[RMDB]
RNA sequence: GGGAACGACUCGAGUAGAGUCGAAAAGAUAUGGACAUUAACAGCUUUUGACGAGCUAUGGGUCGGAAACGACCCAUGAGCUCGAUAAGCUGAGUGUCCUAAGUCAAAAGGCUUGUUCGCAAGCCAACAGAGAUUCUUUCUUCGGAAAGAAUCUCUGAAAAGAAACAACAACAACAAC
Reactivity to 2A3 in 0.01 (KOAc 150mM, MgCl2 10mM, bicine 150mM(pH8.5), 24C), signal-to-noise 1, nucleotides 027 to 126: g020a010u060a020u090g000g010a010c020a020u060u220a300a070c000a160g000c010u050u160u190u300g300a280c250g010a000g000c000u000a020u000g000g020g020u020c010g000g040a060a000a040c010g000a000c030c090c000a000u000g010a000g000c010u010c000g010a040u050a010a000g050c010u000g000a010g020u000g010u000c020c000u020a070a080g070u000c040a050a000a100a150g000g000c000u000u020g020u110u150c270g090c150a000a000g000c000c000a000a000
Reactivity to DMS in 0.01 (KOAc 150mM, MgCl2 10mM, bicine 150mM(pH8.5), 24C), signal-to-noise 2, nucleotides 027 to 126: g000a050u010a300u000g010g000a010c000a030u000u000a190a260c010a000g030c000u000u000u000u000g010a230c100g000a020g010c000u010a010u000g010g030g030u000c010g040g010a120a130a110c000g000a020c000c020c000a000u000g000a020g040c030u000c000g020a100u010a020a040g010c000u020g020a070g000u000g040u000c000c000u000a020a090g040u010c030a090a160a130a070g000g010c020u000u000g010u000u020c270g000c030a020a000g010c010c010a150a140

This 177-nucleotide RNA was probed chemically with 2A3 and DMS. The RNA was probed in 150 mM KOAc, 10 mM MgCl2 and 150 mM bicine (pH 8.5) at 24 C. High DMS reactivity at an A or C suggests that its Watson-Crick edge is free. 2A3 adducts were read by reverse transcription with SuperScript II with manganese. Values cover nucleotides 27 to 126.